[RMDB]
RNA sequence: GGGAACGACUCGAGUAGAGUCGAAAAGGAAUAUGAGCGCGUUUGAUGAAUUCAAUGAGGGCUUUGGACUAGACGUAUCUGACACUCCGGAGGAGCUGGCGUUUGAAACAGAGUCGGCUAUUGAGGAGCAUGAAAAUUUAUUCGUAAAUUUUCAUGCAAAAGAAACAACAACAACAAC
Reactivity to DMS in 0.01 (KOAc 150mM, MgCl2 10mM, bicine 150mM(pH8.5), 24C), signal-to-noise 7, nucleotides 027 to 126: g000g000a110a080u010a090u000g010a050g010c070g010c070g010u000u000u010g010a060u010g010a100a120u010u000c050a030a050u000g010a270g000g010g010c020u000u000u000g010g000a100c070u010a080g010a050c050g010u010a060u000c040u010g000a120c140a080c040u000c030c030g020g020a210g020g010a040g020c080u000g000g000c030g000u000u010u010g000a110a080a130c060a050g010a050g010u000c020g010g000c070u000a060u010u000g000a080g010g000a200
Reactivity to 2A3 in 0.01 (KOAc 150mM, MgCl2 10mM, bicine 150mM(pH8.5), 24C), signal-to-noise 4, nucleotides 027 to 126: g030g000a060a060u110a060u230g040a040g040c050g010c050g020u040u080u110g050a050u030g030a040a220u120u060c040a020a030u110g020a090g090g050g000c000u040u040u060g020g000a010c010u020a020g000a030c010g030u040a070u060c030u030g010a030c020a010c090u010c010c070g170g050a130g030g020a030g010c040u010g020g000c020g050u060u090u070g040a040a010a000c010a000g020a000g020u010c010g020g010c010u030a040u040u050g030a030g050g000a030
The record gives the reactivity of an RNA of 177 nucleotides to DMS and 2A3. Values cover nucleotides 27 to 126. The reactions ran in a buffer of 150 mM KOAc, 10 mM MgCl2 and 150 mM bicine (pH 8.5), at 24 C. Source: RMDB library OK2TST, as collected in RNAgym. For 2A3 the reverse transcriptase was SuperScript II with manganese.